Structure probing data (DMS and 2A3) for a 177-nucleotide construct. The 2A3 profile rests on 3,241 reads. Values are in units of 0.01, from 0 to 300, in steps of 10. The data come from the RNA Mapping Database (RMDB), library OK2TRN. The reactions ran in a buffer of 150 mM KOAc, 10 mM MgCl2 and 150 mM bicine (pH 8.5), at 24 C. For 2A3 the reverse transcriptase was SuperScript II with manganese.
[RMDB]
RNA sequence: GGGAACGACUCGAGUAGAGUCGAAAAUUGUUCGCCCUAUGAACUGGAAGGCUUGAGUGCAGGAGAGGAAAGCGGAAUUCCUAGUGUAGCGGUGGAAUGCAUAGAUAUUAGGAGGAACAUCAGCGGCAUGCGUAAUCCUUUUCGAAGGAUUACGCAUAAAAGAAACAACAACAACAAC
Reactivity to DMS in 0.01 (KOAc 150mM, MgCl2 10mM, bicine 150mM(pH8.5), 24C), signal-to-noise 4, nucleotides 027 to 126: u000u010g010u010u010c060g020c030c030c030u000a080u010g000a080a070c100u000g000g010a090a090g010g010c030u000u000g010a100g030u000g020c040a060g020g010a090g010a070g000g000a040a060a090g020c080g020g000a090a110u010u000c030c030u010a070g020u010g000u010a080g010c060g020g050u010g020g000a070a080u010g000c030a070u020a090g010a060u000a070u010u000a050g010g000a050g000g010a070a080c090a040u000c100a070g020c070g020g000c120
Reactivity to 2A3 in 0.01 (KOAc 150mM, MgCl2 10mM, bicine 150mM(pH8.5), 24C), signal-to-noise 2, nucleotides 027 to 126: u080u070g050u040u030c020g070c000c010c010u080a080u120g100a080a040c060u070g000g060a050a000g030g020c000u040u060g050a020g040u090g010c050a000g000g040a050g000a010g010g030a060a050a010g040c010g020g040a020a040u050u020c010c000u020a070g040u040g020u100a040g000c050g020g020u020g040g050a040a010u050g000c020a030u040a110g060a040u090a080u130u090a050g010g030a010g010g010a020a010c030a050u070c030a020g030c010g050g000c040